[RMDB]
RNA sequence: GGGAACGACUCGAGUAGAGUCGAAAAGAAAGAAAGCCGAAGCAGCGAAAGAGGUCAAACGUCAGGAUUUCGGGCUUAAAAACGACAUUAUGCAGAAAGCCGACGUCAAUGUCGUAAACAAAGAAAAAUGAUUAGGCUGGUUCGCCAGCCUAAUCAUAAAAGAAACAACAACAACAAC
Reactivity to 2A3 in 0.01 (KOAc 150mM, MgCl2 10mM, bicine 150mM(pH8.5), 24C), signal-to-noise 1, nucleotides 027 to 126: g170a000a100a000g210a210a160a020g000c000c000g010a090a000g060c170a000g030c000g120a000a010a100g100a000g020g000u040c050a010a010a010c060g000u010c040a080g020g030a000u000u000u000c000g000g010g000c050u060u060a000a000a000a000a000c010g000a000c000a040u060u010a000u110g000c130a060g220a050a000a000g090c050c000g050a180c060g060u100c060a030a030u010g000u000c000g100u040a050a060a060c090a190a090a060g190a140a080a050a030
Reactivity to DMS in 0.01 (KOAc 150mM, MgCl2 10mM, bicine 150mM(pH8.5), 24C), signal-to-noise 1, nucleotides 027 to 126: g000a110a160a060g110a150a180a100g020c010c000g040a010a200g020c050a010g000c000g000a000a150a070g000a010g000g070u020c050a010a150a080c150g000u000c010a050g080g000a020u000u000u010c020g000g000g000c000u060u000a090a020a130a100a090c030g020a090c050a000u000u000a060u030g000c040a220g000a060a010a180g000c050c080g000a000c000g000u030c090a000a000u000g060u000c000g000u000a000a210a120c060a030a040a200g000a000a000a000a170

This 177-nucleotide RNA was probed chemically with 2A3 and DMS. The DMS profile rests on 967 reads. DMS adducts were read by reverse transcription with MarathonRT.